The record gives the reactivity of an RNA of 177 nucleotides to DMS and 2A3. For DMS, 1,175 sequencing reads were counted. DMS adducts were read by reverse transcription with MarathonRT. The reactions ran in a buffer of 150 mM KOAc, 10 mM MgCl2 and 150 mM bicine (pH 8.5), at 24 C. The data come from the RNA Mapping Database (RMDB), library TTRDEL.
[RMDB]
RNA sequence: GGGAACGACUCGAGUAGAGUCGAAAAGAUAUGGAAGGUUGCAGACAUGCUGAAUCGGAAACGAUCCAGCAACAGCUGCUGCCUUCCUAAGUCAAAACGCCCGAAGAUCUUCGGAUCUUCGGGCGAAGUUAUACACCAGCUUCGGCUGGUGUAUAACAAAAGAAACAACAACAACAAC
Reactivity to DMS in 0.01 (KOAc 150mM, MgCl2 10mM, bicine 150mM(pH8.5), 24C), signal-to-noise 1, nucleotides 027 to 126: g020a010u000a090u020g000g000a040a000g000g040u000u000g000c000a010g020a230c150a160u010g030c000u020g000a020a000u000c000g010g000a050a040a100c000g010a010u000c020c000a000g000c000a010a080c300a080g020c000u000g000c000u000g000c000c000u000u030c000c010u000a000a030g000u000c000a080a060a100a200c050g010c000c000c000g000a000a010g010a000u000c000u000u010c190g000g000a010u000c000u000u000c000g000g000g000c010g010a000a020
Reactivity to 2A3 in 0.01 (KOAc 150mM, MgCl2 10mM, bicine 150mM(pH8.5), 24C), signal-to-noise 1, nucleotides 027 to 126: g000a000u030a000u040g010g010a010a000g040g030u030u030g050c010a020g120a300c080a300u020g000c000u010g020a030a000u000c000g000g000a000a000a010c010g000a000u020c000c000a020g020c000a000a010c030a040g060c000u000g000c000u010g020c000c000u020u000c000c000u000a000a000g000u000c000a000a090a150a170c030g000c030c050c020g050a000a000g000a010u100c100u300u300c300g090g010a010u020c000u000u010c000g010g000g000c000g010a010a000